Chemical mapping of a 177-nucleotide RNA with 2A3 and DMS.

RNA sequence: GGGAACGACUCGAGUAGAGUCGAAAAGGGUACAGCACAAUCUCAACAUUUGUUUAAUUUAACAACUCAAACACUGAAGAAAGUCAAAGGACUGUACUACUUUGUAGGUGUAGCAGUCGCCCAGUGGCUAACACCUUGCGUUCGCGCAAGGUGUUAGAAAAGAAACAACAACAACAAC
Reactivity to 2A3 in 0.01 (KOAc 150mM, MgCl2 10mM, bicine 150mM(pH8.5), 24C), signal-to-noise 4, nucleotides 027 to 126: g080g000g000u030a030c010a020g040c020a010c030a060a080u010c030u020c050a070a100c010a110u050u040u070g070u030u030u030a170a190u050u070u170a100a030c040a000a050c000u030c050a050a060a020c070a040c080u050g010a040a020g090a120a110a010g120u100c090a070a040a010g120g010a020c020u010g010u060a060c010u050a060c010u140u050u110g160u160a050g020g010u030g020u040a020g020c010a000g000u010c000g020c010c010c000a030g040u040g020g000
Reactivity to DMS in 0.01 (KOAc 150mM, MgCl2 10mM, bicine 150mM(pH8.5), 24C), signal-to-noise 3, nucleotides 027 to 126: g010g000g020u000a020c090a100g000c080a070c020a100a070u000c030u000c070a170a150c130a080u010u000u020g010u000u000u050a050a090u000u010u020a090a050c140a090a040c190u000c080a080a060a060c050a030c050u000g000a070a100g030a050a030a110g000u000c130a060a010a090g040g010a060c010u010g010u010a030c020u000a080c010u010u000u020g000u030a100g000g010u010g000u010a040g010c030a030g000u050c040g010c010c020c000a060g000u030g010g000
About this RNA:
The data come from the RNA Mapping Database (RMDB), libraries RFM100 and RFMREP. Conditions: 150 mM KOAc, 10 mM MgCl2 and 150 mM bicine (pH 8.5), 24 C. For DMS the reverse transcriptase was MarathonRT.